[RMDB]
RNA sequence: GGGAACGACUCGAGUAGAGUCGAAAACGACGGGUCUUCGGACCCGUCGAAAUAAUGCGUAGCUCGCGCUACGCAGGCAUCGAGUAGGUCGAGGCACCUACAAAAGCUUCGAGUUCGCUCGAAGCAAGGAAUAGAAUAGCUUCGGCUAUUCUAUUCCAAAAGAAACAACAACAACAAC
Reactivity to 2A3 in 0.01 (KOAc 150mM, MgCl2 10mM, bicine 150mM(pH8.5), 24C), signal-to-noise 3, nucleotides 027 to 126: c010g000a000c020g010g000g010u010c030u070u090c270g130g030a000c000c030c000g000u010c000g010a010a000a000u110a020a060u020g000c000g010u000a000g000c030u040c190g100c010g000c090u030a000c010g000c000a000g050g020c010a090u110c070g020a050g030u010a000g000g020u020c060g160a180g110g100c130a000c010c000u030a010c020a000a090a010a010g000c000u000u010c000g010a000g030u040u100c210g040c060u000c000g000a000a000g030c010a010a070
Reactivity to DMS in 0.01 (KOAc 150mM, MgCl2 10mM, bicine 150mM(pH8.5), 24C), signal-to-noise 2, nucleotides 027 to 126: c020g020a020c010g000g010g010u000c000u000u000c180g030g000a010c000c000c020g000u000c000g000a010a030a080u000a150a120u000g010c010g000u000a000g020c010u000c300g010c300g010c000u000a000c000g010c000a000g010g010c100a110u000c060g010a090g000u010a020g000g030u000c010g010a100g000g000c090a090c000c000u000a030c040a070a060a080a100g000c000u010u000c000g010a020g000u000u000c210g000c010u000c000g000a010a010g000c000a030a030

Conditions: 150 mM KOAc, 10 mM MgCl2 and 150 mM bicine (pH 8.5), 24 C. The record gives the reactivity of an RNA of 177 nucleotides to 2A3 and DMS. For 2A3, 3,255 sequencing reads were counted. It was measured as part of the RMDB library M2PK50.